The data come from the RNA Mapping Database (RMDB), library OK2TRN. An RNA of 177 nucleotides, treated with DMS and read out base by base.

RNA sequence: GGGAACGACUCGAGUAGAGUCGAAAAGAUGCGGCCGCGGUUUCUGGUGAAACCCAACAGAAGGGGAGUCAGUCAUGACGUUGCGAGUGGUUCCGGAGGGGCUGGCCGCAGCCAGCGCUGCGGUGGAAAAAUGAAACCUGUUCGCAGGUUUCAUUUUAAAAGAAACAACAACAACAAC
Reactivity to DMS in 0.01 (KOAc 150mM, MgCl2 10mM, bicine 150mM(pH8.5), 24C), signal-to-noise 2, nucleotides 027 to 126: g010a080u000g000c080g010g000c050c070g030c050g000g010u000u000u000c010u000g020g030u010g010a050a060a080c030c010c050a100a060c130a130g010a110a100g010g000g010g000a160g010u000c040a060g000u000c180a100u000g010a070c040g000u000u020g000c050g000a060g020u010g000g010u000u000c000c030g000g000a110g000g010g020g030c060u010g010g000c000c030g010c020a040g040c000c050a110g020c300g000c010u000g020c000g020g050u010g000g010a020
Annotation
DMS adducts were read by reverse transcription with MarathonRT. The reactions ran in a buffer of 150 mM KOAc, 10 mM MgCl2 and 150 mM bicine (pH 8.5), at 24 C.